[RMDB]
RNA sequence: GGGAACGACUCGAGUAGAGUCGAAAAGAACAGAAUGCCGCACUGGCUGCCCUGAUGAGAACACACCCGUGACUAGCGUCGAAACAUCAACAGUGCGGGCUGUUGGUGUCGGGAGCCACUAAAAGAAAUAGUCACCAGGAUUCGUCCUGGUGACUAUAAAAGAAACAACAACAACAAC
Reactivity to DMS in 0.01 (KOAc 150mM, MgCl2 10mM, bicine 150mM(pH8.5), 24C), signal-to-noise 2, nucleotides 027 to 126: g020a120a070c070a050g020a030a040u060g010c000c000g050c040a080c050u010g000g000c040u020g020c040c040c080u010g010a130u040g000a080g030a050a150c060a040c110a150c010c030c020g050u030g040a000c050u010a070g030c120g000u000c050g030a220a180a040c010a000u000c000a000a020c010a000g020u000g000c150g000g010g000c060u000g000u000u000g000g010u000g020u000c020g050g000g000a180g010c030c040a080c070u010a080a030a030a110g000a090a070
Reactivity to 2A3 in 0.01 (KOAc 150mM, MgCl2 10mM, bicine 150mM(pH8.5), 24C), signal-to-noise 1, nucleotides 027 to 126: g070a020a010c080a030g130a010a060u110g070c000c000g160c000a000c000u090g000g000c000u000g050c050c000c000u110g050a240u040g160a050g000a070a010c010a010c000a000c020c010c010g040u030g000a110c040u080a010g000c000g060u020c160g110a200a040a110c020a000u050c000a000a010c000a000g000u000g190c000g000g130g000c000u000g000u020u000g020g000u010g040u010c030g000g000g010a040g080c000c000a020c000u020a050a050a050a050g170a000a170
The record gives the reactivity of an RNA of 177 nucleotides to DMS and 2A3. 2A3 adducts were read by reverse transcription with SuperScript II with manganese. The 2A3 profile rests on 758 reads. It was measured as part of the RMDB library OK1LIB.